[RMDB]
RNA sequence: GGGAACGACUCGAGUAGAGUCGAAAAAGUUAAAAAGGCACAUUCCUAGACCCUGCCUCAGAACUACUGAACAGAGUCACUGGGUGUGGAGUCCAGGAAUCUGCAUUUUUACCCCUGUCGCCCCCGCUCUAUUUCUAACAUUCGUGUUAGAAAUAGAAAAAGAAACAACAACAACAAC
Reactivity to 2A3 in 0.01 (KOAc 150mM, MgCl2 10mM, bicine 150mM(pH8.5), 24C), signal-to-noise 9, nucleotides 027 to 126: a000g090u090u040a010a010a000a000a010g030g000c000a000c000a010u000u000c000c000u000a010g000a000c000c000c000u010g010c010c000u070c020a020g040a080a020c010u300a130c020u130g060a140a050c090a150g050a010g040u030c060a060c190u000g000g000g010u190g090u080g070g010a050g000u000c010c010a000g000g000a000a000u000c010u010g000c000a010u000u000u000u000u030a030c010c000c000c010u030g080u070c040g030c000c000c000c000c010g010c020
Reactivity to DMS in 0.01 (KOAc 150mM, MgCl2 10mM, bicine 150mM(pH8.5), 24C), signal-to-noise 9, nucleotides 027 to 126: a070g010u030u010a000a000a010a010a010g000g010c000a010c120a020u000u000c000c000u000a080g010a010c010c020c000u000g010c000c000u000c000a010g010a300a020c010u000a070c040u010g010a140a150c280a080g000a020g000u000c120a090c000u000g000g000g000u030g060u010g010g000a060g000u000c000c040a000g000g000a010a000u000c200u010g000c000a010u000u000u000u000u000a030c020c010c000c010u010g010u010c070g010c020c000c000c020c030g010c120